Annotation: Structure probing data (DMS and 2A3) for a 177-nucleotide construct. For DMS the reverse transcriptase was MarathonRT. For 2A3 the reverse transcriptase was SuperScript II with manganese. The 2A3 profile rests on 9,133 reads.

[RMDB]
RNA sequence: GGGAACGACUCGAGUAGAGUCGAAAAUAUGUGCUAAAUUGCUUUUGAUCAAAUCCAUCUGGGGCCAAAUGGUUAUCGAACAAAGAGUUUCCAGCCAGUUUGUUAUGCACUGGAGCAUUCUCACCCAGUUAUAUAUCAAAUUCGUUUGAUAUAUAACAAAAGAAACAACAACAACAAC
Reactivity to DMS in 0.01 (KOAc 150mM, MgCl2 10mM, bicine 150mM(pH8.5), 24C), signal-to-noise 8, nucleotides 027 to 126: u000a080u000g020u010g010c030u000a040a060a080u000u010g010c030u000u000u000u000g020a080u010c060a060a100a110u000c040c030a060u000c040u010g010g010g010g010c090c040a050a080a040u000g010g010u000u000a100u010c110g010a050a070c070a040a070a090g000a100g000u000u000u000c040c070a080g000c090c040a060g010u000u000u010g010u010u010a070u010g010c070a040c040u000g000g010a080g010c040a050u000u000c070u000c080a130c030c020c030a130
Reactivity to 2A3 in 0.01 (KOAc 150mM, MgCl2 10mM, bicine 150mM(pH8.5), 24C), signal-to-noise 5, nucleotides 027 to 126: u170a070u070g030u020g010c020u050a090a120a110u080u050g030c000u070u130u060u140g030a050u090c040a050a100a100u060c030c000a020u020c040u060g040g000g090g000c030c020a030a080a070u060g000g050u050u070a090u170c060g050a040a030c020a060a100a020g060a020g010u020u070u020c010c010a010g020c010c000a010g030u060u110u080g050u060u070a080u190g000c030a000c010u020g020g010a020g020c000a020u070u000c020u010c020a060c010c000c000a010